[RMDB]
RNA sequence: GGGAACGACUCGAGUAGAGUCGAAAACUCGACGAUCUUAGAAAUAAUUUGCCGCACCGACCGAAUCUUAGCUUCUAGCACCUCGUUACACCUGCAGGCGGCGUCCACAUCUUCGCGCCCGCGGGGCAAUGUGGCGUGCUGCCGGAGUCGCGCGAAGAGCAAGACUAAUUUUCGAAUUAGUCUUGCUAAAAGAAACAACAACAACAAC
Reactivity to DMS in 0.01 (KOAc 150mM, MgCl2 10mM, bicine 150mM(pH8.5), 24C), signal-to-noise 2, nucleotides 027 to 156: c010u000c020g050a100c040g010a070u010c040u000u000a130g010a100a110a110u000a060a140u000u000u020g040c010c000g020c030a110c040c030g000a070c030c000g010a080a110u010c080u000u020a090g010c060u000u010c060u010a020g010c060a090c010c010u010c030g030u000u000a050c040a060c030c010u000g030c030a070g030g000c000g040g040c020g040u010c010c040a060c030a000u010c020u000u000c060g030c040g020c050c060c150g080c020g010g000g020g010c080a040a030u000g020u000g020g020c100g020u010g020c040u000g000c030c010g010g030a130g040u000c030g050c070g000c010g020a070a100g010
Reactivity to 2A3 in 0.01 (KOAc 150mM, MgCl2 10mM, bicine 150mM(pH8.5), 24C), signal-to-noise 5, nucleotides 027 to 156: c020u030c020g050a040c050g040a070u050c060u140u170a090g140a120a150a020u190a090a150u140u050u100g030c020c020g000c040a030c030c030g090a060c030c010g060a080a040u050c050u100u060a040g050c030u090u060c030u090a010g010c030a050c030c010u030c020g000u020u040a030c040a050c030c010u010g020c020a020g070g030c010g060g030c020g050u090c030c010a110c010a100u160c030u050u030c010g000c020g050c030c060c010g010c010g010g000g010g000c030a100a090u050g010u040g030g010c020g010u040g030c030u060g010c010c010g010g030a010g010u030c000g000c000g010c040g080a060a030g020